[RMDB]
RNA sequence: GGGAACGACUCGAGUAGAGUCGAAAAAAAAGAUUUCUGAGACAAACACGCUUCACAAUGUGCGGCAAAGAAACAUUGUUUAUGCACAGGCACUUCGCAAUGUGUGCUCAAACAUUGCUUAUUCAAAAAAAGAUUUUAGACUUCGGUCUAAAAUCAACAGUUAUCGUGAGUUCGCUCACGAUAACUGAAAAGAAACAACAACAACAAC
Reactivity to 2A3 in 0.01 (KOAc 150mM, MgCl2 10mM, bicine 150mM(pH8.5), 24C), signal-to-noise 2, nucleotides 027 to 156: a000a000a000a020g170a070u190u200u070c090u130g090a040g020a090c040a090a120a010c080a000c050g040c020u060u080c020a010c020a020a010u020g000u000g000c000g010g030c110a180a080a000g020a050a030a000c000a040u000u000g050u050u110u130a130u110g050c050a030c040a120g080g030c010a000c010u020u010c030g010c000a000a000u010g010u000g000u000g030c030u060c140a080a100a000c000a000u010u010g000c000u060u110a160u180u170c070a060a010a000a000a000a000a160g000a000u000u000u000u000a010g000a010c000u040u020c200g030g000u000c000u020a000a000a000a000u000c000a000a010

About this RNA: This 207-nucleotide RNA was probed chemically with 2A3. The RNA was probed in 150 mM KOAc, 10 mM MgCl2 and 150 mM bicine (pH 8.5) at 24 C. The data come from the RNA Mapping Database (RMDB), library M2RFPK. Values cover nucleotides 27 to 156.